[RMDB]
RNA sequence: GGGAACGACUCGAGUAGAGUCGAAAAGCGACAACCUGGCCGAGGACAUCAUGCGGCUGCGGGAGAAGUUGCAAGAGGAGAUGCUUCAGAGAGAGGAAGCCGAGAGCACCCUGCAGUCUUUCCGACAACUCACCCACUCAUUCGUGAGUGGGUGAGUAAAAGAAACAACAACAACAAC
Reactivity to 2A3 in 0.01 (KOAc 150mM, MgCl2 10mM, bicine 150mM(pH8.5), 24C), signal-to-noise 4, nucleotides 027 to 126: g060c030g010a020c040a080a020c010c000u020g020g020c020c020g050a040g020g050a030c020a070u100c030a040u160g050c010g040g000c000u020g010c050g030g010g020a110g070a070a050g090u150u120g050c040a080a020g060a070g110g050a080g020a070u130g040c000u000u060c040a030g060a010g020a010g010a020g170g050a030a000g030c020c010g140a120g000a010g050c010a020c010c000c000u030g000c010a020g000u000c020u020u020u000c050c000g030a040c070a040
Reactivity to DMS in 0.01 (KOAc 150mM, MgCl2 10mM, bicine 150mM(pH8.5), 24C), signal-to-noise 2, nucleotides 027 to 126: g000c060g020a090c090a110a070c020c010u000g020g040c090c000g000a110g040g020a050c070a140u050c060a080u030g040c050g000g000c000u000g020c070g000g000g000a150g000a030a040g000u080u000g050c070a000a170g000a190g000g000a130g000a240u030g010c000u000u000c050a150g070a200g060a080g000a070g000g000a060a080g020c030c030g000a060g000a100g040c010a080c010c000c000u000g000c060a020g000u020c020u000u000u020c010c040g040a100c180a040

This 177-nucleotide RNA was probed chemically with 2A3 and DMS. The 2A3 profile rests on 2,146 reads. 2A3 adducts were read by reverse transcription with SuperScript II with manganese.